[RMDB]
RNA sequence: GGGAACGACUCGAGUAGAGUCGAAAACAGAUGCUCAGUAAUCACACGGGGCAGCUCGUGGCUGCCACAUUGUGCAGCACAGAUUACAGAACAUGCCCAUGGUACUGGCAAGUUCUAUCGGACAGUGUCUGUUAAAAUUGUUCGCAAUUUUAACAGAAAAAGAAACAACAACAACAAC
Reactivity to DMS in 0.01 (KOAc 150mM, MgCl2 10mM, bicine 150mM(pH8.5), 24C), signal-to-noise 9, nucleotides 027 to 126: c140a140g000a060u000g010c010u000c030a090g010u000a010a030u010c030a300c100a050c080g010g010g000g010c240a080g000c010u000c080g010u000g000g010c000u000g000c010c020a080c230a070u010u010g030u000g010c030a030g000c020a100c170a090g010a040u000u000a040c060a080g010a020a020c010a060u000g020c010c000c030a150u000g010g000u000a040c060u000g010g000c080a070a070g010u000u000c050u000a060u000c100g010g010a060c060a070g010u010g010
Reactivity to 2A3 in 0.01 (KOAc 150mM, MgCl2 10mM, bicine 150mM(pH8.5), 24C), signal-to-noise 8, nucleotides 027 to 126: c020a010g120a090u050g020c020u030c110a000g010u040a070a070u060c020a010c000a000c120g020g000g030g000c040a100g050c010u030c040g080u060g130g010c000u000g010c020c000a030c020a130u140u230g060u120g020c000a000g020c020a010c020a070g040a030u040u110a030c020a050g020a020a010c020a050u040g030c010c020c010a020u100g100g010u090a060c030u030g010g010c030a020a020g010u020u020c060u070a140u140c090g040g040a020c020a060g070u050g060
Source: RMDB library OK2TRN, as collected in RNAgym. Chemical mapping of a 177-nucleotide RNA with DMS and 2A3. For DMS the reverse transcriptase was MarathonRT. 2A3 adducts were read by reverse transcription with SuperScript II with manganese.